[RMDB]
RNA sequence: GGGAACGACUCGAGUAGAGUCGAAAAGAAAGAAAGAAAGAAAACUAUGAAGUCCUAUUCACGCGCGAUAGGAUAAACUUCAUAGUGAUCGUGUAUGUGCUAACGCACAUACACGAAUGCGCAUGCAGAACUGCAUGCAUGAACAUAGCGCGUGCAAAAAUAGGUAAUCCUUCGGGAUUACCUAUUUAAAAGAAACAACAACAACAAC
Reactivity to 2A3 in 0.01 (KOAc 150mM, MgCl2 10mM, bicine 150mM(pH8.5), 24C), signal-to-noise 2, nucleotides 027 to 156: g070a000a110a000g050a050a070a010g070a010a120a010g050a030a130a000a010c000u000a000u020g000a000a010g010u030c000c000u010a010u030u060c120a000c000g000c000g000c000g000a000u000a000g010g010a030u110a130a050a010c000u000u000c000a000u000a000g020u000g000a010u000c000g000u000g000u010a000u000g020u000g010c080u180a090a030c200g000c000a000c010a000u010a000c000a000c000g000a020a010u080g010c010g000c010a000u010g000c010a010g090a270a060c210u080g000c000a010u000g000c000a030u140g040a040a060c100a090u130a000g000c000g000c000g000u000g010c000a020a030
Reactivity to DMS in 0.01 (KOAc 150mM, MgCl2 10mM, bicine 150mM(pH8.5), 24C), signal-to-noise 1, nucleotides 027 to 156: g000a170a050a140g020a220a040a060g000a140a210a190g020a090a080a130a020c050u000a010u000g010a020a010g020u010c000c010u000a000u000u000c030a040c020g020c000g000c010g020a020u000a000g020g030a130u010a060a110a080c020u000u000c010a000u000a010g030u000g020a040u000c040g000u000g010u000a000u010g040u000g030c010u020a100a220c300g040c020a010c000a010u020a000c010a010c020g010a030a010u000g010c050g020c000a010u000g000c030a070g010a140a150c070u010g040c030a000u000g000c010a080u000g010a050a080c110a180u000a080g030c020g020c000g010u000g000c100a050a060